[RMDB]
RNA sequence: GGGAACGACUCGAGUAGAGUCGAAAAGAUAUGGACAGUGGACAUGAUGUGGAUCGGAAACGAUCCUCCAUCAACAGCCACGUCCUAAGUCAAAACAGCCCGGGAAACUUCGGUUUCCCGGGCUGAACUAAUACCUAGUGUUCGCACUAGGUAUUAGAAAAGAAACAACAACAACAAC
Reactivity to DMS in 0.01 (KOAc 150mM, MgCl2 10mM, bicine 150mM(pH8.5), 24C), signal-to-noise 3, nucleotides 027 to 126: g010a020u000a300u010g000g000a000c000a130g070u000g010g020a050c050a200u000g000a010u000g020u000g000g000a010u000c000g010g000a090a080a160c000g000a010u000c000c000u010c300c040a000u000c000a020a090c300a170g000c000c000a000c010g010u000c000c000u000a040a110g010u000c030a080a060a130a260c020a000g020c000c000c000g000g000g020a010a010a000c000u000u010c190g050g000u000u010u000c000c000c000g000g000g030c010u000g000a010a040
Reactivity to 2A3 in 0.01 (KOAc 150mM, MgCl2 10mM, bicine 150mM(pH8.5), 24C), signal-to-noise 1, nucleotides 027 to 126: g000a020u040a060u100g030g020a010c140a130g040u010g010g000a060c100a290u070g000a020u020g000u000g050g000a000u000c020g040g040a030a040a070c010g010a000u000c010c020u000c010c030a000u000c000a010a060c080a050g060c020c000a020c020g000u000c000c000u050a170a060g010u000c030a020a010a140a200c000a000g000c020c030c020g000g030g040a040a000a010c060u170u190c300g140g010u000u010u030c000c040c000g110g040g000c000u010g000a000a000